[RMDB]
RNA sequence: GGGAACGACUCGAGUAGAGUCGAAAAGAAUGUAAGUGCGUAAUCGCGCCUUGACGUGAGUGAGACAAGACAGAAAGCUAUCCAAAGUAAGAUAGCAUAGCUCACAAUACGCUGAUCUGUCAUAGAACCUGGAGUAGUACUUCGGUACUACUCCAGGAAAAGAAACAACAACAACAAC
Reactivity to 2A3 in 0.01 (KOAc 150mM, MgCl2 10mM, bicine 150mM(pH8.5), 24C), signal-to-noise 3, nucleotides 027 to 126: g100a040a070u270g020u280a010a060g010u040g070c010g000u050a090a030u130c050g000c020g000c000c040u060u130g030a040c010g030u000g010a020g010u010g000a010g020a060c120a140a010g000a000c010a070g020a050a080a000g000c000u000a000u020c000c000a140a060a060g190u110a170a030g180a050u020a000g010c000a000u100a000g000c010u010c010a010c000a000a050u080a100c050g030c020u010g020a040u040c000u020g000u010c000a050u040a080g140a060a010
Reactivity to DMS in 0.01 (KOAc 150mM, MgCl2 10mM, bicine 150mM(pH8.5), 24C), signal-to-noise 3, nucleotides 027 to 126: g000a260a010u010g040u050a040a140g000u010g000c010g000u000a080a280u000c060g000c020g000c010c120u040u010g010a110c020g000u000g010a080g000u000g050a000g000a110c100a070a080g010a020c000a000g000a080a070a080g020c000u000a010u000c000c110a040a100a190g010u040a210a120g000a000u000a010g010c010a150u000a020g010c000u010c020a050c130a120a100u000a000c030g000c000u000g010a070u000c010u000g000u000c010a090u020a070g000a140a140